This 177-nucleotide RNA was probed chemically with DMS and 2A3. Conditions: 150 mM KOAc, 10 mM MgCl2 and 150 mM bicine (pH 8.5), 24 C.

[RMDB]
RNA sequence: GGGAACGACUCGAGUAGAGUCGAAAAGAUAUGGACUGGAACUACGAGCACUGUAGACGUUGAAAUCGGAAACGAUGGAGUCUACAAACUCGCCAGUCCUAAGUCAAAAGUAACGUUCGCGUUACAAGACAAUCAAUCCGUUCGCGGAUUGAUUGUCAAAAGAAACAACAACAACAAC
Reactivity to DMS in 0.01 (KOAc 150mM, MgCl2 10mM, bicine 150mM(pH8.5), 24C), signal-to-noise 1, nucleotides 027 to 126: g010a030u000a300u010g000g000a010c020u020g000g010a020a070c050u010a300c000g010a000g030c080a120c130u000g010u000a020g020a000c000g040u010u020g000a050a100a010u000c000g010g000a160a100a200c000g030a000u000g000g000a040g000u000c000u010a010c000a060a010a070c000u000c010g000c000c020a000g010u000c000c010u000a000a070g020u000c010a070a020a090a090g010u000a000a010c000g010u010u000c270g040c040g000u000u000a010c010a110a150
Reactivity to 2A3 in 0.01 (KOAc 150mM, MgCl2 10mM, bicine 150mM(pH8.5), 24C), signal-to-noise 1, nucleotides 027 to 126: g020a010u060a000u100g000g010a000c000u010g000g050a140a100c130u180a070c300g000a000g070c050a010c180u040g000u000a000g000a000c020g140u300u000g000a000a050a020u030c000g000g020a050a070a010c020g000a000u020g000g010a020g010u000c010u000a010c050a020a000a010c010u060c000g000c010c010a000g000u010c000c000u010a050a020g000u010c020a050a000a050a190g040u010a020a020c020g000u040u120c300g050c000g070u030u000a000c020a030a010